[RMDB]
RNA sequence: GGGAACGACUCGAGUAGAGUCGAAAAUGAAAUCAAAAUUAGAGAAGUGAAGGCUGAGAUGGUAAUGGUAAUGAAGGUAGGAUAUUGACACUGGUUUACGGUAACCACCACCACCAAAAUAAAAAAACGUUAUAGUACGAUUCGUCGUACUAUAACGAAAAGAAACAACAACAACAAC
Reactivity to 2A3 in 0.01 (KOAc 150mM, MgCl2 10mM, bicine 150mM(pH8.5), 24C), signal-to-noise 6, nucleotides 027 to 126: u060g010a020a000a040u100c060a040a060a070a120u190u170a090g010a010g020a190a030g040u070g080a050a030g040g000c040u040g010a040g000a150u050g010g000u050a090a040u090g030g010u030a060a050u090g060a020a010g070g020u060a030g040g030a050u030a070u110u140g030a020c020a010c100u030g020g020u050u060u100a040c040g020g000u010a020a030c010c000a010c010c000a010c000c010a010c020c010a060a060a060a050u220a040a080a030a010a000a000a000
Reactivity to DMS in 0.01 (KOAc 150mM, MgCl2 10mM, bicine 150mM(pH8.5), 24C), signal-to-noise 6, nucleotides 027 to 126: u000g010a100a090a090u010c080a070a050a070a070u010u000a110g010a080g010a100a060g010u000g010a090a080g010g000c030u000g010a090g000a050u000g000g000u000a050a060u010g000g010u010a040a040u000g010a060a050g000g010u000a060g010g000a080u000a110u010u010g010a090c070a050c080u000g020g010u000u000u000a060c100g020g010u010a040a060c050c030a060c060c050a050c060c030a050c050c070a030a030a060a050u040a020a020a060a040a040a060a120